[RMDB]
RNA sequence: GGGAACGACUCGAGUAGAGUCGAAAACUCAUGGCUUUGAAUUAACGUCUGCAUCAUACUUUUGCAAGAUAGGUAAGGAACAGAAGUGUUGCAUGUGCAAUAGACGCGCUGCAGCGUACUCUUCACCGCUUUAAUAGACCUUCGGGUCUAUUAAAGCAAAAGAAACAACAACAACAAC
Reactivity to 2A3 in 0.01 (KOAc 150mM, MgCl2 10mM, bicine 150mM(pH8.5), 24C), signal-to-noise 2, nucleotides 027 to 126: c020u000c010a070u080g050g000c010u120u080u160g090a110a100u200u060a120a030c030g030u000c010u050g020c030a030u030c010a040u120a290c080u110u100u030u050g000c030a040a100g000a140u060a070g000g060u090a080a080g040g010a020a010c050a050g070a140a010g050u030g000u060u010g000c030a080u240g020u010g000c010a000a070u090a230g110a080c070g000c010g010c000u020g000c000a000g000c000g030u040a040c020u010c010u030u020c000a050c030c020
Reactivity to DMS in 0.01 (KOAc 150mM, MgCl2 10mM, bicine 150mM(pH8.5), 24C), signal-to-noise 2, nucleotides 027 to 126: c020u020c030a080u010g010g000c070u000u000u010g020a100a060u010u000a090a050c060g000u000c050u010g020c010a070u000c070a090u000a060c080u000u020u000u000g030c070a080a060g010a110u000a070g020g010u000a060a030g020g000a090a200c090a040g000a050a030g010u000g020u020u000g010c080a040u020g030u000g020c020a060a120u010a130g000a110c130g020c010g040c030u000g020c020a040g000c020g010u000a050c160u000c070u000u000c050a090c130c120